Annotation
An RNA of 177 nucleotides, treated with DMS and read out base by base. DMS adducts were read by reverse transcription with MarathonRT. Reactivities are given for positions 27 through 126. The reactions ran in a buffer of 150 mM KOAc, 10 mM MgCl2 and 150 mM bicine (pH 8.5), at 24 C. For DMS, 1,017 sequencing reads were counted.
RNA sequence: GGGAACGACUCGAGUAGAGUCGAAAAGACACAGUGAGGACCCCGACAGCCCCCCUCCUCACCUCUUGUCCUGGGAAGGCCAGGCCUGCAUGGCAGAGAUGUAACCAGACUCCAAAGCUUUCUGGGACGUGAAAAUCGUAUUCGUACGAUUUUCACGAAAAGAAACAACAACAACAAC
Reactivity to DMS in 0.01 (KOAc 150mM, MgCl2 10mM, bicine 150mM(pH8.5), 24C), signal-to-noise 2, nucleotides 027 to 126: g010a100c100a100c150a100g020u000g010a040g000g010a120c040c020c060c090g000a090c160a210g010c030c030c000c000c010c030u000c000c000u010c010a040c020c170u010c030u000u020g000u000c000c020u000g010g040g000a030a010g030g010c000c060a070g000g000c100c040u000g000c060a140u020g000g000c010a140g030a210g000a170u000g000u020a060a210c210c030a100g000a070c040u020c040c040a080a110a280g020c030u000u000u000c000u000g000g010g010a110